[RMDB]
RNA sequence: GGGAACGACUCGAGUAGAGUCGAAAAAUGACUAAACGAACAAAAAAGGUCGGAGUCACCGGUAAAUACGGAACGAGAUAUGGUGCCUCCCUCCGUAAACAAAUCAAGAAGAUGGAAGUGACCCAGAAGGGUAGGUAAUAUUCGUAUUACCUACCCUAAAAGAAACAACAACAACAAC
Reactivity to DMS in 0.01 (KOAc 150mM, MgCl2 10mM, bicine 150mM(pH8.5), 24C), signal-to-noise 6, nucleotides 027 to 126: a120u000g000a140c070u000a070a080a110c070g010a090a070c130a010a040a090a080a130a160g010g010u000c290g010g010a040g010u000c000a010c010c010g010g010u010a030a110a050u000a070c100g010g020a080a130c180g010a080g010a100u010a070u000g000g020u000g010c080c010u000c000c030c020u000c000c010g000u000a060a060a050c130a030a060a050u010c080a050a100g000a070a050g010a050u000g000g010a060a080g010u010g000a090c010c010c030a130g000a150
Reactivity to 2A3 in 0.01 (KOAc 150mM, MgCl2 10mM, bicine 150mM(pH8.5), 24C), signal-to-noise 3, nucleotides 027 to 126: a000u060g030a020c050u080a110a150a000c050g070a060a020c060a120a150a030a030a020a010g020g000u020c000g010g010a010g020u010c000a000c010c000g000g080u110a080a110a020u180a090c110g070g090a180a090c080g030a050g020a230u100a050u180g030g010u010g010c000c000u000c020c020c000u000c000c000g040u030a010a000a030c050a020a090a040u110c030a060a070g100a060a010g020a070u080g020g030a040a010g030u020g040a070c000c000c000a030g040a070
Structure probing data (DMS and 2A3) for a 177-nucleotide construct. Values cover nucleotides 27 to 126. DMS adducts were read by reverse transcription with MarathonRT. For 2A3 the reverse transcriptase was SuperScript II with manganese. Source: RMDB library OK2TST, as collected in RNAgym.